[RMDB]
RNA sequence: GGGAACGACUCGAGUAGAGUCGAAAAGCCGAUGAAUUGCCGAGAAGCCUGGCUCGAAAUCGUCGACGCAUCGACGACGGUCCUGCCAUGAGACCGUAACGAGGACAUGUAGCCUCGAAUGGCGUCGUAUAACAUGAGUGGUUCGCCACUCAUGUAACGAUGUCAUAUAGUUCGCUAUAUGACAUCGAAAAGAAACAACAACAACAAC
Reactivity to 2A3 in 0.01 (KOAc 150mM, MgCl2 10mM, bicine 150mM(pH8.5), 24C), signal-to-noise 9, nucleotides 027 to 156: g060c030c020g020a050u120g040a070a190u170u120g030c050c040g040a030g050a150a030g030c040c090u090g030g010c030u030c050g070a090a070a060u010c000g010u010c010g000a040c070g040c130a130u090c010g010a010c000g010a010c000g000g000u000c000c010u050g000c000c010a020u030g020a010g000a090c000c010g010u050a010a010c000g000a000g000g000a020c050a140u260g070u210a050g020c000c000u000c010g010a010a010u020g010g030c000g010u050c030g000u040a090u050a240a010c000a000u000g000a000g000u000g030g010u070u090c150g010c070c000a000c000u000c000a000u000g000u000a000a000
Reactivity to DMS in 0.01 (KOAc 150mM, MgCl2 10mM, bicine 150mM(pH8.5), 24C), signal-to-noise 4, nucleotides 027 to 156: g040c020c030g020a090u010g010a060a100u000u000g020c040c030g010a120g010a100a120g020c030c030u000g010g000c010u000c040g010a040a080a080u000c030g000u000c010g010a080c120g020c120a150u010c030g010a050c030g010a040c000g010g020u000c000c010u000g000c020c160a100u000g000a090g000a020c010c000g010u000a060a080c040g010a060g030g010a110c060a160u010g010u000a120g000c010c000u000c000g010a060a060u000g020g020c020g010u000c030g010u000a080u010a100a070c000a010u000g010a030g020u000g000g010u000u000c300g010c010c000a010c010u010c000a000u000g010u000a030a150
Structure probing data (2A3 and DMS) for a 207-nucleotide construct. 2A3 adducts were read by reverse transcription with SuperScript II with manganese. The RNA was probed in 150 mM KOAc, 10 mM MgCl2 and 150 mM bicine (pH 8.5) at 24 C. For DMS, 14,405 sequencing reads were counted.